[RMDB]
RNA sequence: GGGAACGACUCGAGUAGAGUCGAAAAGCAUGAGUGAGCUUACACUCAUGUGAGCACUGUUAGUCCAAACAGUGCUGAGUCUAGUGUAAGCUCACUGGACUGACUAGUGUUUGGACUAACACUAGUAGGACUGCUUUCUAUUCGUAGAAAGCAGUCCAAAAGAAACAACAACAACAAC
Reactivity to DMS in 0.01 (KOAc 150mM, MgCl2 10mM, bicine 150mM(pH8.5), 24C), signal-to-noise 1, nucleotides 027 to 126: g010c110a090u020g000a050g010u000g000a020g000c020u020u000a010c010a000c010u000c290a050u000g020u000g000a040g020c000a000c000u010g010u000u000a030g000u010c050c020a030a030a040c000a000g010u010g000c020u000g000a090g000u010c080u020a010g000u000g010u010a010a030g000c010u000c000a000c000u000g000g010a120c180u000g000a040c010u000a010g000u000g010u000u000u000g000g010a010c040u000a010a010c000a000c000u000a010g000u010a040
Notes: Structure probing data (DMS) for a 177-nucleotide construct. Conditions: 150 mM KOAc, 10 mM MgCl2 and 150 mM bicine (pH 8.5), 24 C. It was measured as part of the RMDB library OK2TRN.